[RMDB]
RNA sequence: GGGAACGACUCGAGUAGAGUCGAAAAAGUGCCAUGGCGUACGCGCCAUGGCACAAUAGCAUAUGAUGGAAAAAUCUUAAUCUUCUGAGACUUGUGAUGUCUUCAAAGGAACCACUUCAAUGCAAAAGACUAAUUGAGAGUUCGCUCUCAAUUAGUCAAAAGAAACAACAACAACAAC
Reactivity to 2A3 in 0.01 (KOAc 150mM, MgCl2 10mM, bicine 150mM(pH8.5), 24C), signal-to-noise 5, nucleotides 027 to 126: a000g020u000g000c020c010a000u010g010g000c050g050u080a090c300g020c000g000c100c000a000u010g020g020c000a010c000a000a000u020a000g000c000a000u100a080u050g030a010u010g010g090a060a080a080a100a050u060c080u110u120a100a090u050c020u170u040c050u090g010a010g000a020c020u180u060g120u200g240a120u200g020u040c000u110u090c070a060a050a020g000g000a020a080c010c000a010c050u040u000c040a020a000u030g000c000a050a060a040a040
Reactivity to DMS in 0.01 (KOAc 150mM, MgCl2 10mM, bicine 150mM(pH8.5), 24C), signal-to-noise 2, nucleotides 027 to 126: a070g050u000g000c010c000a000u050g000g040c040g040u030a020c270g010c050g060c080c000a010u020g070g010c000a000c050a010a020u020a120g020c000a000u000a100u000g010a040u020g000g000a050a140a060a050a050u000c100u010u050a070a130u030c040u010u000c120u000g020a040g020a070c020u000u030g000u010g050a080u030g000u010c000u000u040c000a000a030a020g010g000a100a240c080c100a000c050u000u010c010a020a030u000g000c020a040a060a110a050

Source: RMDB libraries RFM100 and RFMREP, as collected in RNAgym.
An RNA of 177 nucleotides, treated with 2A3 and DMS and read out base by base.
The reactions ran in a buffer of 150 mM KOAc, 10 mM MgCl2 and 150 mM bicine (pH 8.5), at 24 C.